Source information: An RNA of 177 nucleotides, treated with 2A3 and DMS and read out base by base. For 2A3, 1,738 sequencing reads were counted. Reactivities are given for positions 27 through 126.
RNA sequence: GGGAACGACUCGAGUAGAGUCGAAAAUUCCAGCUGUCCAAAUGCUGGGAUAACUAUAGAGGCACACCUCAUUGCCUUCAGUGCGGAAGUGGUUUUCUCAACUCCAAUCAAAAAGGCAGAAAAAGUAGGUAGAUUAUAACUUCGGUUAUAAUCUACCAAAAGAAACAACAACAACAAC
Reactivity to 2A3 in 0.01 (KOAc 150mM, MgCl2 10mM, bicine 150mM(pH8.5), 24C), signal-to-noise 2, nucleotides 027 to 126: u010u000c000c000a020g020c010u080g130u200c100c060a100a060a120u130g010c000u000g010g040g020a010u050a020a030c050u050a030u060a300g000a000g020g040c090a040c010a210c080c010u020c050a100u000u100g000c000c000u040u030c020a010g000u000g010c010g010g030a180a080g030u030g070g100u040u050u180u210c150u010c030a010a030c000u010c000c010a000a000u000c000a000a000a000a000a090g000g040c000a000g050a010a080a000a000a010g130u140a070
Reactivity to DMS in 0.01 (KOAc 150mM, MgCl2 10mM, bicine 150mM(pH8.5), 24C), signal-to-noise 2, nucleotides 027 to 126: u000u000c000c000a010g020c010u000g040u020c110c230a140a150a110u020g000c010u000g000g000g030a010u020a070a070c140u000a080u010a100g020a050g000g020c180a080c220a070c020c010u000c040a120u010u000g000c040c000u000u010c050a300g010u010g010c300g010g000a060a030g010u000g010g010u020u000u010u000c080u000c030a090a000c040u010c000c000a040a170u010c010a010a050a110a000a010g010g000c020a070g010a040a040a060a080a190g010u000a140